[RMDB]
The record gives the reactivity of an RNA of 177 nucleotides to DMS. The data come from the RNA Mapping Database (RMDB), library TTRINS. For DMS the reverse transcriptase was MarathonRT. The reactions ran in a buffer of 150 mM KOAc, 10 mM MgCl2 and 150 mM bicine (pH 8.5), at 24 C. The DMS profile rests on 913 reads.

RNA sequence: GGGAACGACUCGAGUAGAGUCGAAAAGAUAUGGAGACCCCUGGACUAGGAGAUUGACAUGCUGGUGGGUCGGAAACGACCCUAACAGCAACAGCAAUCUCCUAGUCCAGGGAAGUCUCCUAAGUCAGAUGUAGGAAAUCUUCGGAUUUCCUACAUCAAAAGAAACAACAACAACAAC
Reactivity to DMS in 0.01 (KOAc 150mM, MgCl2 10mM, bicine 150mM(pH8.5), 24C), signal-to-noise 1, nucleotides 027 to 126: g000a130u010a300u000g000g000a020g010a000c000c000c010c000u000g020g000a000c000u010a000g030g040a030g020a030u000u000g000a160c070a300u000g000c010u000g000g040u000g000g020g050u010c000g010g000a140a080a200c000g000a050c000c000c010u000a040a160c000a030g000c020a030a130c250a200g000c000a010a010u000c000u010c000c030u000a000g020u000c000c010a000g010g000g000a010a020g010u000c000u020c000c000u020a010a070g010u010c090a100